[RMDB]
RNA sequence: GGGAACGACUCGAGUAGAGUCGAAAACUCAUUCACGGUUAGGUCUGUCUCUGGCAGAGCAGACAGUCAGGAGGAUGAGGUCACCAUCUUCACGAAGCCAAAGCCAAAUUCCGCCUUGUCCUGUAAACGUGAGGAUGCUAUUCGUAGCAUCCUCACGAAAAGAAACAACAACAACAAC
Reactivity to 2A3 in 0.01 (KOAc 150mM, MgCl2 10mM, bicine 150mM(pH8.5), 24C), signal-to-noise 3, nucleotides 027 to 126: c000u010c010a050u080u030c010a040c080g070g020u100u160a070g130g030u010c000u010g050u060c000u010c000u050g280g000c080a020g010a010g000c000a000g000a010c000a000g080u030c060a060g010g190a030g050g000a000u030g010a020g040g040u030c010a030c010c000a050u040c000u100u080c050a090c110g030a040a010g010c000c000a100a000a010g000c020c000a070a030a070u030u000c000c020g000c020c000u000u030g010u040c010c010u070g070u170a070a070a090
Reactivity to DMS in 0.01 (KOAc 150mM, MgCl2 10mM, bicine 150mM(pH8.5), 24C), signal-to-noise 2, nucleotides 027 to 126: c030u000c030a020u000u000c080a020c100g000g020u000u010a030g080g000u000c000u000g000u100c000u000c050u010g000g000c200a140g000a000g030c130a020g000a040c050a130g000u060c070a180g030g030a080g000g000a020u000g000a070g000g000u000c000a160c070c000a130u040c100u010u040c040a170c010g000a130a110g020c040c000a010a060a080g030c000c050a000a090a190u000u060c020c000g060c000c000u000u000g010u000c000c000u000g030u030a070a090a270
Overview: The record gives the reactivity of an RNA of 177 nucleotides to 2A3 and DMS. For 2A3 the reverse transcriptase was SuperScript II with manganese. The 2A3 profile rests on 1,746 reads.